[RMDB]
RNA sequence: GGGAACGACUCGAGUAGAGUCGAAAAUCAUCUGGGUAAGACUCAAGAUAUUCUGCCCGCCCACCUGUACGGCUAGAGCCUCACUACGCAGACGCGCGCCCUUACAGCUUUCACAAGGAGCAGAGCGCCAUAAAUGAUAGUUCGCUAUCAUUUAUGGAAAAGAAACAACAACAACAAC
Reactivity to 2A3 in 0.01 (KOAc 150mM, MgCl2 10mM, bicine 150mM(pH8.5), 24C), signal-to-noise 9, nucleotides 027 to 126: u080c020a010u020c030u080g010g010g020u090a160a080g070a140c010u020c120a080a050g030a080u070a090u140u020c020u030g020c000c010c010g020c010c010c000a030c010c020u060g030u080a030c030g030g000c030u040a030g010a020g120c000c010u020c010a060c070u160a040c060g010c060a020g030a110c050g020c010g000c000g020c040c000c000u020u040a060c040a030g010c020u060u130u120c100a080c020a110a090g040g010a030g020c020a010g020a020g040c030g000
Reactivity to DMS in 0.01 (KOAc 150mM, MgCl2 10mM, bicine 150mM(pH8.5), 24C), signal-to-noise 9, nucleotides 027 to 126: u000c090a050u010c040u000g010g010g010u010a100a100g020a300c060u000c050a050a050g010a080u000a070u000u000c050u000g010c020c010c030g010c040c020c020a100c120c050u010g010u000a050c270g010g000c040u000a080g000a120g010c020c020u000c050a060c070u000a060c110g010c050a060g010a100c090g010c060g020c080g000c030c010c020u000u000a080c110a080g010c080u000u000u010c090a070c180a080a140g000g000a080g020c040a060g000a100g010c160g010